The record gives the reactivity of an RNA of 207 nucleotides to 2A3 and DMS. DMS adducts were read by reverse transcription with MarathonRT. Reactivities are given for positions 27 through 156. 2A3 adducts were read by reverse transcription with SuperScript II with manganese.
RNA sequence: GGGAACGACUCGAGUAGAGUCGAAAACUUUGGGAAAAAGACAACUGCCAACGAAGAGCUGGCUCUCGCUGCUUAAUCUAAACAAUUAAGUGAGCGCGCUUAUCGGAUUUUGCGCCUGUCCGGGUCCGAAGGCGUGGAGAAGGCAGGAUCGCCAAGGCGUACUCAAAUAGUUCGCUAUUUGAGUACGAAAAGAAACAACAACAACAAC
Reactivity to 2A3 in 0.01 (KOAc 150mM, MgCl2 10mM, bicine 150mM(pH8.5), 24C), signal-to-noise 7, nucleotides 027 to 156: c010u020u010u030g020g000g020a050a120a070a090a060g050a050c060a120a080c080u020g000c010c010a050a040c050g050a050a070g010a010g050c110u160g140g000c010u040c000u000c010g010c010u020g000c000u010u000a020a010u010c020u040a050a020a040c020a020a020u010u010a010a000g010u050g250a030g010c020g010c010g000c010u060u130a210u280c010g000g020a020u020u040u070u300g100c080g010c020c030u060g060u090c050c060g070g000g000u020c010c000g010a020a010g000g000c020g000u030g020g020a090g000a070a070g000g000c010a000g010g010a030u020c020g000c030c000a000a010g020g000
Reactivity to DMS in 0.01 (KOAc 150mM, MgCl2 10mM, bicine 150mM(pH8.5), 24C), signal-to-noise 2, nucleotides 027 to 156: c020u000u000u000g020g000g010a040a080a060a070a120g000a060c030a060a060c040u000g020c010c030a030a170c000g010a080a250g000a120g020c050u000g020g020c040u000c020u000c030g010c010u000g000c000u000u010a020a010u010c010u010a190a160a190c140a070a020u000u000a010a000g020u000g010a050g020c010g010c000g000c010u000u000a100u000c010g020g010a050u000u000u000u010g020c010g050c020c040u020g000u000c030c020g020g000g030u000c010c000g020a050a030g010g010c000g020u000g010g010a210g000a080a210g010g000c030a020g010g000a080u000c060g010c030c020a030a070g030g010